[RMDB]
RNA sequence: GGGAACGACUCGAGUAGAGUCGAAAAGAUAUGGAGAUAUGGGAGAAGUAGUCGGAAACGACUAUACUUCGAAGAACAUGCCUCCUAAGUCAAAACUUUCCUUGCGGGUUCGCCCGCAAGGAAAGAACAUCAAAAAAGUGUUCGCACUUUUUUGAUGAAAAGAAACAACAACAACAAC
Reactivity to DMS in 0.01 (KOAc 150mM, MgCl2 10mM, bicine 150mM(pH8.5), 24C), signal-to-noise 2, nucleotides 027 to 126: g000a010u000a000u010g000g020a020g000a050u000a010u010g010g000g010a000g010a010a020g000u000a010g000u000c000g020g010a000a030a010c000g000a010c000u000a080u010a060c030u000u000c000g010a100a150g010a110a200c000a010u000g000c140c000u000c000c000u010a010a110g010u000c000a110a080a100a200c010u000u000u000c000c000u000u000g010c020g020g000g000u000u010c270g000c000c010c010g010c010a000a000g010g000a000a010a000g000a080a170
Reactivity to 2A3 in 0.01 (KOAc 150mM, MgCl2 10mM, bicine 150mM(pH8.5), 24C), signal-to-noise 1, nucleotides 027 to 126: g000a000u000a000u050g010g000a020g000a010u020a010u030g000g020g000a010g010a000a000g040u000a000g000u000c000g000g020a020a010a000c000g020a010c020u010a010u070a070c010u000u000c060g040a300a010g000a000a000c000a000u010g000c000c000u000c000c010u010a010a010g000u000c000a020a030a050a270c020u000u000u000c020c000u000u000g030c050g010g080g050u060u080c300g100c120c010c040g050c010a000a000g000g000a000a000a000g010a000a000

An RNA of 177 nucleotides, treated with DMS and 2A3 and read out base by base. For 2A3, 3,379 sequencing reads were counted. DMS adducts were read by reverse transcription with MarathonRT. The DMS profile rests on 2,250 reads. The reactions ran in a buffer of 150 mM KOAc, 10 mM MgCl2 and 150 mM bicine (pH 8.5), at 24 C. Source: RMDB library TTRDEL, as collected in RNAgym.